[RMDB]
RNA sequence: GGGAACGACUCGAGUAGAGUCGAAAAUCAAUGUUGGUGACGAUCUCUGGAAAUUCAGGAGAGAGCCAGAUCAACCUUUCAUCACUCGCUCGGUUGCUUUCAAAAGCAGCUUCUUCUCUGGAUGGGAGGCUACUUACUAAUUCGUUAGUAAGUAGCCAAAAGAAACAACAACAACAAC
Reactivity to DMS in 0.01 (KOAc 150mM, MgCl2 10mM, bicine 150mM(pH8.5), 24C), signal-to-noise 4, nucleotides 027 to 126: u010c120a110a110u000g010u010u000g000g010u010g010a050c060g000a100u000c010u010c030u000g010g000a110a130a170u010u010c120a160g000g010a040g000a030g010a120g020c030c060a070g000a080u000c050a040a080c030c120u010u000u000c050a050u000c050a050c040u000c090g020c030u010c040g010g000u000u010g010c040u000u000u010c250a060a070a090a080g020c030a020g010c030u000u000c030u000u000c020u000c020u000g000g000a080u000g000g000g020a120
Reactivity to 2A3 in 0.01 (KOAc 150mM, MgCl2 10mM, bicine 150mM(pH8.5), 24C), signal-to-noise 4, nucleotides 027 to 126: u090c020a080a110u170g060u120u060g040g020u050g020a060c020g040a040u010c030u000c020u040g050g110a150a230a210u240u120c050a090g080g010a010g000a010g000a000g010c000c020a030g030a060u050c040a020a060c010c030u010u080u060c030a060u030c010a020c030u020c000g000c010u030c020g000g030u040u010g000c010u030u040u150c090a140a140a000a020g020c010a000g000c020u000u020c010u050u060c020u000c030u050g100g030a060u040g040g050g020a050
Source: RMDB library OK2TRN, as collected in RNAgym. The record gives the reactivity of an RNA of 177 nucleotides to DMS and 2A3. The RNA was probed in 150 mM KOAc, 10 mM MgCl2 and 150 mM bicine (pH 8.5) at 24 C. For DMS, 4,310 sequencing reads were counted. Values cover nucleotides 27 to 126. For DMS the reverse transcriptase was MarathonRT.